[RMDB]
RNA sequence: GGGAACGACUCGAGUAGAGUCGAAAACUUCACGGCUCCAGGCACCGGAUCCAUCCCCUUUACAUUUUACGUCCGCCAUGUCCGCGAAGGCCAAACCUACUGCCUCCGCGCCGUUGACGUCCGUCAGAAGGAAGAAAUCUGCUUUUCAUGCCUUGUAGCAGUGAUAUUUAUUCGUAAAUAUCACUGCAAAAGAAACAACAACAACAAC
Reactivity to DMS in 0.01 (KOAc 150mM, MgCl2 10mM, bicine 150mM(pH8.5), 24C), signal-to-noise 2, nucleotides 027 to 156: c050u000u000c030a070c040g040g000c030u000c040c060a120g010g030c040a080c050c040g020g010a090u000c060c040a180u010c030c020c030c070u000u020u010a080c070a180u000u000u000u000a080c060g020u010c020c000g040c020c030a100u000g000u000c020c020g080c020g000a030a050g060g050c020c040a050a110a140c070c040u000a080c060u010g020c020c010u010c020c020g000c000g020c030c020g000u010u000g010a060c030g010u010c030c020g030u010c070a100g010a090a030g020g050a090a110g010a070a070a070u000c050u000g000c030u000u000u010u000c070a040u010g000c020c020u000u000g010u000a280
Reactivity to 2A3 in 0.01 (KOAc 150mM, MgCl2 10mM, bicine 150mM(pH8.5), 24C), signal-to-noise 5, nucleotides 027 to 156: c040u120u070c040a020c110g030g000c030u040c060c030a050g040g000c010a040c050c010g030g020a050u060c080c010a130u070c030c010c000c020u040u110u130a100c070a180u130u100u050u070a030c030g020u020c000c010g020c020c050a090u110g040u030c060c020g000c010g000a000a020g000g010c030c030a060a050a060c040c020u100a080c040u120g010c000c000u020c010c010g020c010g000c030c030g020u010u030g030a020c010g030u000c010c030g020u030c030a030g030a080a020g060g020a030a010g040a030a100a010u050c040u060g040c050u080u080u040u080c050a050u130g030c010c000u100u110g070u140a020